[RMDB]
RNA sequence: GGGAACGACUCGAGUAGAGUCGAAAAAUGAGUUCAGUUAGGUGAAAGACCUGCCUCACUGGAUAACAUUGAUCUCUGCCUAAUUCUUCGCAUCAAUUUGCUCCAGAGAUUUGAUGCUAAAACUCUCGACACCCUUUAGUUUCGACUAAAGGGUGUCAAAAGAAACAACAACAACAAC
Reactivity to 2A3 in 0.01 (KOAc 150mM, MgCl2 10mM, bicine 150mM(pH8.5), 24C), signal-to-noise 2, nucleotides 027 to 126: a000u030g000a020g020u000u010c000a010g010u010u000a000g020g020u050g100a290a130a090g180a160c050c070u060g000c020c000u020c030a000c000u000g010g020a030u070a220a060c010a010u010u040g100a100u030c030u030c040u080g130c010c020u080a110a160u130u070c070u070u120c020g000c010a010u020c010a020a050u040u030u110g020c000u070c030c010a110g040a000g000a210u030u020u140g010a020u020g000c020u020a080a090a000a040c000u000c020u030c110
Reactivity to DMS in 0.01 (KOAc 150mM, MgCl2 10mM, bicine 150mM(pH8.5), 24C), signal-to-noise 2, nucleotides 027 to 126: a010u010g000a300g040u000u000c000a010g020u000u010a010g000g010u000g040a110a140a080g010a130c180c110u000g000c000c000u010c040a040c010u010g010g030a090u000a110a110c050a030u000u010g000a160u010c010u010c010u010g000c060c040u000a070a040u040u000c070u000u000c250g010c040a030u000c010a020a020u010u000u000g040c070u010c060c060a160g000a080g000a020u030u000u000g000a020u000g030c000u010a050a070a130a120c090u000c120u010c180